The data come from the RNA Mapping Database (RMDB), library OK3TST. Chemical mapping of a 207-nucleotide RNA with 2A3 and DMS. Values cover nucleotides 27 to 156.
RNA sequence: GGGAACGACUCGAGUAGAGUCGAAAAAAACCACCAAAUCUUCCUAAGCAGCUGUACCAUUUUGCAUUCUUACCAACAAUGAAUGAGAGUUUCUGUUGGUCCACAUUCUCACCAGCAUCUGUUCUCUGGAUUUUGGUCAUCCUAAUAAGUGUGUAGAGAUUUACUAGUACUUCGGUACUAGUAAAUCAAAAGAAACAACAACAACAAC
Reactivity to 2A3 in 0.01 (KOAc 150mM, MgCl2 10mM, bicine 150mM(pH8.5), 24C), signal-to-noise 4, nucleotides 027 to 156: a000a000a000c050c020a030c010c010a080a090a100u050c020u070u040c030c010u070a080a020g040c010a020g000c010u040g050u110a060c030c030a110u050u070u110u140g060c020a030u090u000c010u060u070a070c020c010a020a060c040a090a140u170g050a030a040u090g020a080g020a030g130u000u070u030c030u040g020u030u030g000g010u000c020c000a060c010a050u090u010c030u020c030a040c030c020a000g020c010a040u040c020u060g060u080u040c050u000c030u060g020g010a040u010u030u020u090g030g010u020c020a070u070c000c020u060a110a100u100a240a040g060u100g000u020g030u110a030g030a000
Reactivity to DMS in 0.01 (KOAc 150mM, MgCl2 10mM, bicine 150mM(pH8.5), 24C), signal-to-noise 2, nucleotides 027 to 156: a030a050a070c030c000a080c020c020a040a060a050u000c030u000u010c050c000u000a120a100g040c050a070g030c060u000g060u010a080c050c030a140u000u000u010u000g030c020a110u000u010c020u010u000a210c040c020a070a060c070a080a070u000g010a120a060u010g000a160g030a130g010u000u000u000c080u010g010u000u010g020g010u010c060c030a040c070a110u010u000c020u000c030a150c070c010a080g000c040a020u000c040u000g030u000u000c020u000c010u000g030g020a100u000u020u000u000g030g020u000c030a080u010c040c010u000a040a050u000a010a100g010u010g020u000g030u010a120g000a300